[RMDB]
RNA sequence: GGGAACGACUCGAGUAGAGUCGAAAAGAUAUGGAGGUUAAAGCCGAUAAGUCCCUAUCGGAAACGAUAGAGGACUUUUGACGGCUUUGGGCCUCCUAAGUCAAACCGCCCCGUUCGCGGGGCGGAAGUUAGAAGACAUGUUCGCAUGUCUUCUAACAAAAGAAACAACAACAACAAC
Reactivity to 2A3 in 0.01 (KOAc 150mM, MgCl2 10mM, bicine 150mM(pH8.5), 24C), signal-to-noise 1, nucleotides 027 to 126: g010a000u030a010u110g000g010a000g020g000u050u050a020a000a000g000c020c090g070a150u230a300a020g010u000c010c010c000u020a010u010c000g000g060a110a010a020c030g010a000u010a000g240a300g040g000a000c020u030u030u020u090g000a000c000g000g000c000u000u000u000g030g070g030c000c000u000c010c000u000a030a000g000u000c000a020a120a140c000c000g010c000c020c010c050g050u120u050c300g010c050g080g030g010g000c030g000g000a010a020
Reactivity to DMS in 0.01 (KOAc 150mM, MgCl2 10mM, bicine 150mM(pH8.5), 24C), signal-to-noise 2, nucleotides 027 to 126: g000a030u000a190u030g000g000a000g010g040u000u000a010a000a010g010c000c000g020a120u010a020a010g010u000c000c000c000u000a010u010c010g000g000a070a040a080c000g010a000u000a000g000a140g000g000a020c000u000u000u000u000g030a240c080g000g030c000u000u000u000g000g010g020c000c000u000c010c000u000a000a060g000u000c010a090a190a270c000c010g000c000c000c000c020g020u010u000c220g000c050g050g010g000g020c000g000g010a000a030